Annotation: Structure probing data (DMS and 2A3) for a 207-nucleotide construct. The 2A3 profile rests on 3,966 reads. In probing experiments dimethyl sulfate is read out at A N1 and C N3, which are open when not base-paired.

RNA sequence: GGGAACGACUCGAGUAGAGUCGAAAAGGAAACACCAAUCGUGUUUUACCCUGGAGGCCCAAUCCCCUUCCCUAAAAAACAGAUUAGGAUUGGGACAACUCACUCAGUUGUCCGCUCGACUAGCGGGAGCAAGGGUCUGCCGGAGGAUGCGGAGCCACAAUGUACCUAUGUUCGCAUAGGUACAUUGAAAAGAAACAACAACAACAAC
Reactivity to DMS in 0.01 (KOAc 150mM, MgCl2 10mM, bicine 150mM(pH8.5), 24C), signal-to-noise 3, nucleotides 027 to 156: g000g000a090a030a020c000a050c000c030a130a210u020c120g000u000g010u000u020u000u000a110c030c020c020u000g000g020a170g080g030c000c000c010a140a160u000c010c010c000c020u020u000c020c000c030u000a000a080a120a100a110a270c150a150g010a150u000u000a060g010g010a110u000u000g020g000g020a030c000a030a040c010u000c070a170c200u000c060a130g030u000u000g010u000c000c010g030c010u000c060g000a120c150u000a140g010c020g020g010g000a060g000c050a120a280g000g000g010u000c020u000g010c000c010g010g030a130g010g000a170u000g010c040g010g010a210g020c040c040a150
Reactivity to 2A3 in 0.01 (KOAc 150mM, MgCl2 10mM, bicine 150mM(pH8.5), 24C), signal-to-noise 5, nucleotides 027 to 156: g070g010a040a030a010c020a030c090c090a080a210u190c120g020u030g010u010u020u070u120a120c020c010c000u020g010g020a000g000g000c010c010c000a010a060u010c000c010c000c000u000u030c020c000c000u070a050a040a020a020a040a030c140a060g090a100u040u050a020g020g000a020u020u090g020g010g000a000c000a010a000c000u130c110a130c040u210c120a030g000u010u010g010u000c010c000g000c030u090c080g180a120c080u170a010g020c030g010g000g020a010g020c070a090a180g010g000g000u010c010u070g110c010c000g000g020a050g060g010a020u080g030c020g030g080a030g060c040c010a030
The reactions ran in a buffer of 150 mM KOAc, 10 mM MgCl2 and 150 mM bicine (pH 8.5), at 24 C.